[RMDB]
About this RNA:
Chemical mapping of a 177-nucleotide RNA with 2A3 and DMS. Values cover nucleotides 27 to 126. Source: RMDB libraries RFM100 and RFMREP, as collected in RNAgym. The reactions ran in a buffer of 150 mM KOAc, 10 mM MgCl2 and 150 mM bicine (pH 8.5), at 24 C. For DMS the reverse transcriptase was MarathonRT. 2A3 adducts were read by reverse transcription with SuperScript II with manganese.

RNA sequence: GGGAACGACUCGAGUAGAGUCGAAAAAUGGAAUCAUGUUAAACUUACAGUGCAAGAAAGUAAGUUAACCCAUUUAAUUGAUAGCUAUGCUUAGUGUAAUGUGUAACUAUAGAGAGUAAUUUAAAGAGGUGUUACGUUCAUUCGUGAACGUAACACCAAAAGAAACAACAACAACAAC
Reactivity to 2A3 in 0.01 (KOAc 150mM, MgCl2 10mM, bicine 150mM(pH8.5), 24C), signal-to-noise 2, nucleotides 027 to 126: a000u070g000g000a110a130u100c020a080u300g000u000u040a040a130a000c020u000u000a000c000a140g000u050g260c130a090a060g010a080a110a000g070u000a000a000g000u000u010a000a010c000c000c010a040u090u030u020a120a020u020u140g190a040u010a040g000c040u100a010u070g030c010u080u090a050g040u290g140u300a090a110u110g000u010g000u040a000a000c000u000a010u060a040g060a000g030a000g090u090a160a110u050u040u140a090a080a000g060a040
Reactivity to DMS in 0.01 (KOAc 150mM, MgCl2 10mM, bicine 150mM(pH8.5), 24C), signal-to-noise 1, nucleotides 027 to 126: a000u000g000g000a120a080u000c270a100u050g010u000u000a010a050a020c000u000u000a000c000a080g000u000g000c230a180a040g010a080a200a100g000u000a000a040g020u000u000a000a000c060c060c020a000u000u000u010a060a170u000u060g010a010u010a000g010c040u000a000u020g000c060u000u000a180g010u000g000u000a050a030u000g060u000g010u000a000a020c020u000a000u010a070g000a120g000a140g020u090a020a080u000u000u020a060a040a130g000a190